[RMDB]
RNA sequence: GGGAACGACUCGAGUAGAGUCGAAAAGAAUAUAAGAGCGCAGUAACUGUGAGAGCAAACUGCGCCCGGACUGUAGGAUCCGGUGGCACAGCAACGCUCAAUCACAAAACGCUGUGCCACGUGAAGAGGCAGUAAUCCCAUUCGUGGGAUUACUGCCAAAAGAAACAACAACAACAAC
Reactivity to 2A3 in 0.01 (KOAc 150mM, MgCl2 10mM, bicine 150mM(pH8.5), 24C), signal-to-noise 2, nucleotides 027 to 126: g080a010a080u200a000u070a080a060g010a000g000c000g010c000a000g000u030a100a060c000u000g030u070g090a050g010a000g020c000a000a000a170c000u000g000c000g000c000c000c000g010g000a030c030u160g090u250a100g100g010a080u000c000c000g040g000u000g000g000c000a000c000a000g000c020a110a080c080g030c070u110c050a010a090u130c040a020c090a050a140a080a030c040g000c000u000g000u010g030c000c000a010c010g030u090g040a080a020g060a080
Reactivity to DMS in 0.01 (KOAc 150mM, MgCl2 10mM, bicine 150mM(pH8.5), 24C), signal-to-noise 1, nucleotides 027 to 126: g000a130a200u060a040u000a060a090g000a250g040c050g030c000a000g000u000a170a080c080u000g010u000g000a070g000a180g000c020a040a000a010c000u000g000c000g000c000c000c000g040g000a050c020u000g160u100a100g000g040a110u000c000c000g000g000u000g010g010c000a000c000a030g000c000a100a170c130g040c160u200c240a060a070u020c300a140c120a170a070a240a120c070g030c000u000g000u000g000c000c000a000c000g000u000g060a050a100g000a100